Conditions: 150 mM KOAc, 10 mM MgCl2 and 150 mM bicine (pH 8.5), 24 C. This 177-nucleotide RNA was probed chemically with DMS and 2A3.
RNA sequence: GGGAACGACUCGAGUAGAGUCGAAAAGGCCCCUGAUUGGGAAGCUAGCAGUUCCUCAGCCCAGCCACCAGGGGGCCAGAGGCUAAUGGAGCAGUAGUCGCCCCAAAACUUGAAGAUUCUGGGGGGAAUUGUGUUACAACUUCGGUUGUAACACAAUAAAAGAAACAACAACAACAAC
Reactivity to DMS in 0.01 (KOAc 150mM, MgCl2 10mM, bicine 150mM(pH8.5), 24C), signal-to-noise 2, nucleotides 027 to 126: g010g020c040c000c000c060u000g010a110u000u000g000g010g020a300a170g000c040u010a100g030c070a090g010u000u010c040c010u000c130a130g010c000c010c060a140g000c030c010a160c070c090a120g000g000g030g040g020c000c020a050g030a110g010g010c030u010a070a100u010g010g000a030g000c050a110g010u020a060g020u010c080g020c080c000c000c060a020a050a120a080c120u000u000g000a120a140g000a140u000u010c050u000g000g030g000g010g010g000a100
Reactivity to 2A3 in 0.01 (KOAc 150mM, MgCl2 10mM, bicine 150mM(pH8.5), 24C), signal-to-noise 1, nucleotides 027 to 126: g020g010c000c020c000c010u090g080a220u170u190g060g010g080a090a030g020c030u060a000g020c060a050g030u050u090c010c040u030c040a020g000c030c020c010a020g020c020c010a050c000c050a000g090g000g000g050g000c020c010a020g020a040g010g000c030u030a110a050u120g090g020a070g020c020a000g020u050a040g020u030c040g140c000c030c040c010a020a140a040a070c050u060u190g060a040a080g090a260u200u070c040u120g020g000g020g020g000g020a020
For 2A3, 735 sequencing reads were counted. It was measured as part of the RMDB library OK2TRN. 2A3 adducts were read by reverse transcription with SuperScript II with manganese.